[RMDB]
RNA sequence: GGGAACGACUCGAGUAGAGUCGAAAAACGAGUCGUACGCGACUCGAAUGGUAUUGUCGGCGUAAAAGAACAAGACGUCACCGGACGCGACCGGGCUAAAAAGCGAAACGUCAUCUACUGAUGACGAAAAACGGACCUGGGUUCGCCCAGGUCCGAAGAGUAUGUAAGUCUUCGGACUUACAUACUCAAAAGAAACAACAACAACAAC
Reactivity to 2A3 in 0.01 (KOAc 150mM, MgCl2 10mM, bicine 150mM(pH8.5), 24C), signal-to-noise 4, nucleotides 027 to 156: a010c010g000a000g000u010c010g030u050a030c240g030c010g160a000c000u000c000g010a010a090u110g030g070u140a140u150u240g110u110c060g020g020c010g020u070a060a050a060a100g100a100a050c060a080a010g110a030c010g000u000c000a010c020c000g000g010a020c010g000c010g010a000c000c030g000g000g000c050u050a040a000a000a000a010g010c030g070a100a050a030c000g010u010c000a000u010c010u220a300c170u280g000a000u000g000a000c010g030a040a040a000a000a000c010g000g000a000c000c000u000g020g010g020u030u040c100g020c010c000c000a000g000g000u000c000c000g000a000a000
Reactivity to DMS in 0.01 (KOAc 150mM, MgCl2 10mM, bicine 150mM(pH8.5), 24C), signal-to-noise 1, nucleotides 027 to 156: a080c000g020a030g000u000c020g040u040a070c300g040c060g000a030c020u010c000g010a020a100u030g040g040u000a030u000u000g000u000c040g070g000c040g040u050a090a050a050a050g020a040a160c090a300a040g000a120c050g010u010c000a160c000c040g000g050a120c030g010c060g000a160c030c000g000g000g110c170u000a050a020a050a100a020g050c070g010a080a080a100c030g010u000c000a020u000c020u000a100c300u020g020a000u000g050a010c000g050a000a040a040a080a180c050g030g000a020c000c020u000g020g030g000u000u000c300g070c000c010c000a040g000g030u000c040c020g000a000a040
Record summary:
The data come from the RNA Mapping Database (RMDB), library M2RFPK. The record gives the reactivity of an RNA of 207 nucleotides to 2A3 and DMS. For 2A3, 2,868 sequencing reads were counted. The DMS profile rests on 1,683 reads. In probing experiments dimethyl sulfate is read out at A N1 and C N3, which are open when not base-paired. Values cover nucleotides 27 to 156.